[RMDB]
The record gives the reactivity of an RNA of 177 nucleotides to DMS. Conditions: 150 mM KOAc, 10 mM MgCl2 and 150 mM bicine (pH 8.5), 24 C. For DMS the reverse transcriptase was MarathonRT.
RNA sequence: GGGAACGACUCGAGUAGAGUCGAAAAAAGGUUGAUGAAGCCAAUAUGGCCGGCAUUAACGCUGCUAAUACCCAACUCACCGGUGCGGAAGUUGACAAGGUGUGCCGUGACAUUAUUGAAGCAUCGGAUGUCACGCUGAUUUCGAUCAGCGUGACAUAAAAGAAACAACAACAACAAC
Reactivity to DMS in 0.01 (KOAc 150mM, MgCl2 10mM, bicine 150mM(pH8.5), 24C), signal-to-noise 2, nucleotides 027 to 126: a030a050g040g000u000u000g000a060u010g000a300a060g000c040c000a040a160u030a060u010g020g040c010c000g000g000c020a040u000u000a000a010c030g000c090u000g000c150u040a050a140u010a140c030c000c010a150a180c100u000c080a200c000c000g030g030u000g010c010g000g000a060a070g000u000u000g000a090c070a110a010g000g010u010g020u000g010c090c040g000u000g010a120c060a010u030u000a060u000u000g010a210a150g010c010a020u000c030g010g010